[RMDB]
Description:
This 170-nucleotide RNA was probed chemically with 2A3 and DMS.

RNA sequence: GGGAACGACUCGAGUAGAGUCGAAAAGAGUUCCCAACCUUCCCCUUACGGACAAAAGCUGGUCCCGAUAGGGGCACCCACAAUAGGAUGGCAAAAGGGGACUCGGGUCCGUCGUUCCAUCCUUUUCCUACCACCUAGUUCGCUAGGUGGAAAAGAAACAACAACAACAAC
Reactivity to 2A3 in 0.01 (KOAc 150mM, MgCl2 10mM, bicine 150mM(pH8.5), 24C), signal-to-noise 9, nucleotides 027 to 129: g040a010g010u010u010c000c000c010a030a070c010c010u060u090c000c000c000c000u010u030a020c000g010g000a000c030a020a220a030a030g110c150u150g090g010u020c000c010c000g050a050u110a080g000g000g000g000c010a030c000c010c000a060c030a080a100u090a140g040g010a040u030g030g010c050a040a030a070a080g020g010g010g010a020c020u030c070g110g040g020u030c030c030g040u030c020g040u050u000c010c000a030u030c040c000u040u020u040u020c030c010u040a070
Reactivity to DMS in 0.01 (KOAc 150mM, MgCl2 10mM, bicine 150mM(pH8.5), 24C), signal-to-noise 9, nucleotides 027 to 129: g000a200g010u010u010c000c020c030a110a090c150c090u040u030c000c000c030c020u020u020a240c300g030g030a000c040a090a100a150a130g020c160u050g020g010u020c020c010c020g030a090u040a050g000g000g010g030c120a030c020c010c010a110c150a050a040u000a080g010g000a030u000g010g010c120a040a050a100a040g040g030g000g050a000c010u020c110g030g070g050u020c000c060g000u000c050g030u020u030c010c020a020u060c030c050u020u020u020u010c020c020u050a300

Values cover nucleotides 27 to 129. The reactions ran in a buffer of 150 mM KOAc, 10 mM MgCl2 and 150 mM bicine (pH 8.5), at 24 C. For DMS, 45,176 sequencing reads were counted. Source: RMDB library 15KLIB, as collected in RNAgym.